[RMDB]
RNA sequence: GGGAACGACUCGAGUAGAGUCGAAAACGAGGUCGUACAAUACGGUGUUCAUUGGGGGUUUAAGUAAGACACUGAGUACGACCAUGGGUAUGUUUGAAUAUUAAACCCCCAAUUCUGGCAUACUCAAGGUAGACCGUGAUUUCGAUCAUGGUCUACCAAAAGAAACAACAACAACAAC
Reactivity to 2A3 in 0.01 (KOAc 150mM, MgCl2 10mM, bicine 150mM(pH8.5), 24C), signal-to-noise 9, nucleotides 027 to 126: c070g030a070g010g000u000c000g010u000a000c030a050a080u110a220c090g030g000u030g030u090u150c120a140u120u100g000g000g000g020g030u020u050u090a240a220g070u140a130a060g120a020c000a000c010u020g020a020g040u000a000c000g000a000c000c000a000u000g000g000g000u000a000u010g010u010u020u040g020a020a000u050a040u150u210a080a030a030c000c000c000c000c010a000a000u020u010c010u020g000g000c000a000u000a000c000u000c030a020a020
Reactivity to DMS in 0.01 (KOAc 150mM, MgCl2 10mM, bicine 150mM(pH8.5), 24C), signal-to-noise 5, nucleotides 027 to 126: c070g020a160g010g020u000c000g010u010a010c000a100a150u050a240c100g000g020u000g000u000u020c170a090u020u010g000g000g010g020g020u000u010u040a080a110g020u070a090a110g020a070c010a020c000u000g010a170g000u000a000c000g000a000c010c000a010u010g000g000g000u000a000u000g000u000u000u000g000a030a050u020a100u010u030a030a030a050c000c000c000c000c000a020a020u010u000c020u000g010g000c000a010u000a000c000u000c000a040a090

Source: RMDB library OK1LIB, as collected in RNAgym. An RNA of 177 nucleotides, treated with 2A3 and DMS and read out base by base. The RNA was probed in 150 mM KOAc, 10 mM MgCl2 and 150 mM bicine (pH 8.5) at 24 C.